[RMDB]
The record gives the reactivity of an RNA of 177 nucleotides to DMS. DMS adducts were read by reverse transcription with MarathonRT. Reactivities are given for positions 27 through 126. It was measured as part of the RMDB library M2PK50. The DMS profile rests on 1,372 reads. The reactions ran in a buffer of 150 mM KOAc, 10 mM MgCl2 and 150 mM bicine (pH 8.5), at 24 C.
RNA sequence: GGGAACGACUCGAGUAGAGUCGAAAACACUAUUGGUUCGCCAAUAGUGAAACGGCAAGCCGAAGCCGUACGGCAAGCCGAAGCCGAACGGCAACGGCAAAAAAACUGCGUUCUUCGGAACGCAGAAGUAAUUGGGAAUCUUCGGAUUCCCAAUUACAAAAGAAACAACAACAACAAC
Reactivity to DMS in 0.01 (KOAc 150mM, MgCl2 10mM, bicine 150mM(pH8.5), 24C), signal-to-noise 2, nucleotides 027 to 126: c000a000c000u000a000u010u010g010g000u010u010c150g000c000c000a020a040u010a000g000u000g000a020a010a160c060g020g020c220a110a180g030c000c000g000a070a300g000c000c010g020u000a110c020g020g020c030a040a300g000c050c130g010a060a070g000c010c000g020a080a020c060g000g000c020a010a210c020g000g010c000a000a030a030a090a030a030a050c030u000g000c000g010u000u000c000u000u010c130g000g000a000a000c010g000c000a000g000a010a020